[RMDB]
The record gives the reactivity of an RNA of 170 nucleotides to 2A3 and DMS.
RNA sequence: GGGAACGACUCGAGUAGAGUCGAAAACCUUCGGAUGCCCAGGUCGGACCGCGAGGAGGUGGAGAUGCCAUGCCGACCCGAAGAGGAAGAAGAGGACAUGGACGCGAACCGUGAGUGGAACCCUCGAAACGACGCAUGUUCGCAUGCGUCAAAAGAAACAACAACAACAAC
Reactivity to 2A3 in 0.01 (KOAc 150mM, MgCl2 10mM, bicine 150mM(pH8.5), 24C), signal-to-noise 6, nucleotides 027 to 129: c000c000u040u040c020g050g000a020u090g030c000c000c000a020g030g080u040c020g010g050a070c000c030g010c040g040a060g020g010a010g010g000u040g010g000a080g010a020u120g060c030c000a030u040g000c010c020g030a030c000c000c000g050a070a030g020a020g020g010a010a010g010a020a030g020a010g010g010a010c020a050u060g000g000a020c030g000c010g040a020a020c000c000g030u040g030a030g000u040g000g040a030a030c000c010c000u010c010g030a060a050a030c080
Reactivity to DMS in 0.01 (KOAc 150mM, MgCl2 10mM, bicine 150mM(pH8.5), 24C), signal-to-noise 4, nucleotides 027 to 129: c040c030u000u000c010g050g000a000u040g050c010c000c000a090g090g000u020c040g050g000a100c040c040g030c020g030a090g020g020a000g050g000u040g000g000a080g020a110u000g050c040c020a090u000g030c000c000g030a050c110c030c080g030a080a080g010a070g000g030a050a020g030a050a040g020a070g020g000a070c110a060u000g010g010a000c080g030c070g000a030a020c000c000g110u040g000a050g050u000g000g000a060a120c000c000c000u000c070g010a060a090a100c100
Overview: The reactions ran in a buffer of 150 mM KOAc, 10 mM MgCl2 and 150 mM bicine (pH 8.5), at 24 C. For DMS the reverse transcriptase was MarathonRT.